[RMDB]
RNA sequence: GGGAACGACUCGAGUAGAGUCGAAAAUAAUGGAGCCUUACCACCAGUGUAAGAAAUAACGUCUGGGUGUGAAUAAGUACACAGUAUAAGGUAAACUUUGGUGAAGUAGUCAAUUUUGUCAUUUGUUCCCCCUUCACACCCAUAGUGUAGCACUUGACACUAUGAGCAUGUUCGCAUGCUCAUAGUGAAAAGAAACAACAACAACAAC
Reactivity to 2A3 in 0.01 (KOAc 150mM, MgCl2 10mM, bicine 150mM(pH8.5), 24C), signal-to-noise 2, nucleotides 027 to 156: u170a000a050u050g010g050a090g020c000c010u000u000a000c030c030a020c040c020a080g000u010g000u100a060a050g050a140a120a040u160a150a040c120g090u050c130u060g000g000g000u000g000u000g030a030a020u170a210a030g040u030a010c030a010c010a040g090u070a020u000a100a010g020g020u020a000a220a000c020u070u060u080g030g000u100g030a050a050g020u090a030g030u050c050a060a060u080u080u030u180g070u010c040a140u000u010u110g010u090u110c020c000c040c000c000u000u000c000a000c000a000c000c020c000a030u000a010g000u020g060u020a020g000c000a020c060u020u000g000a010
Reactivity to DMS in 0.01 (KOAc 150mM, MgCl2 10mM, bicine 150mM(pH8.5), 24C), signal-to-noise 2, nucleotides 027 to 156: u010a080a110u010g010g010a190g050c030c060u000u000a030c030c030a080c060c100a130g020u030g000u000a070a110g000a110a100a130u000a060a090c060g000u000c070u000g000g000g030u000g020u000g000a030a080u010a030a150g020u000a040c020a060c070a140g000u000a150u000a050a030g000g000u000a050a040a030c040u000u000u020g010g010u000g000a100a070g020u000a120g010u000c080a050a080u000u000u000u000g020u010c020a150u000u010u010g000u000u000c020c000c080c140c050u000u000c040a040c030a040c000c020c000a040u000a020g040u010g050u000a100g040c050a140c040u000u020g000a300

Source: RMDB library OK3TST, as collected in RNAgym.
This 207-nucleotide RNA was probed chemically with 2A3 and DMS.
The RNA was probed in 150 mM KOAc, 10 mM MgCl2 and 150 mM bicine (pH 8.5) at 24 C.